[RMDB]
RNA sequence: GGGAACGACUCGAGUAGAGUCGAAAAGAUAUGGACUCGCGUAGAGAGCUUGGAUUUAUUGUGGCGAAAUGGGUCGGAAACGACCCAUUAAGCCACAAUUGUCAGCUCUCUGAUCGAGUCCUAAGUCCAAUAACGAUUCGUUCGCGAAUCGUUAUUGAAAAGAAACAACAACAACAAC
Reactivity to 2A3 in 0.01 (KOAc 150mM, MgCl2 10mM, bicine 150mM(pH8.5), 24C), signal-to-noise 2, nucleotides 027 to 126: g060a040u090a050u250g000g000a000c000u000c010g000c050g120u180a000g030a010g020a010g020c040u180u300g210g020a090u300u300u220a020u080u140g000u000g010g010c000g010a020a070a000u000g020g040g000u000c000g000g000a090a140a060c020g000a000c000c000c000a020u000u000a020a000g020c000c010a000c000a000a010u000u000g000u010c010a000g000c010u000c020u000c000u030g000a000u020c010g010a000g010u000c000c000u020a010a000g000u000c020
Reactivity to DMS in 0.01 (KOAc 150mM, MgCl2 10mM, bicine 150mM(pH8.5), 24C), signal-to-noise 4, nucleotides 027 to 126: g010a110u010a300u000g000g010a000c000u000c000g030c240g030u000a020g010a020g010a000g020c000u000u010g030g020a020u020u010u010a000u000u000g030u000g000g020c010g000a180a040a010u000g000g000g020u000c010g000g010a100a110a230c010g000a000c000c000c000a000u000u000a020a300g000c010c000a000c000a000a000u000u000g000u000c000a040g000c010u000c000u000c000u000g010a050u010c000g010a020g000u000c000c010u000a000a080g020u010c070

Chemical mapping of a 177-nucleotide RNA with 2A3 and DMS. It was measured as part of the RMDB library TTRINS. The RNA was probed in 150 mM KOAc, 10 mM MgCl2 and 150 mM bicine (pH 8.5) at 24 C. The DMS profile rests on 5,355 reads. For 2A3 the reverse transcriptase was SuperScript II with manganese. Reactivities are given for positions 27 through 126.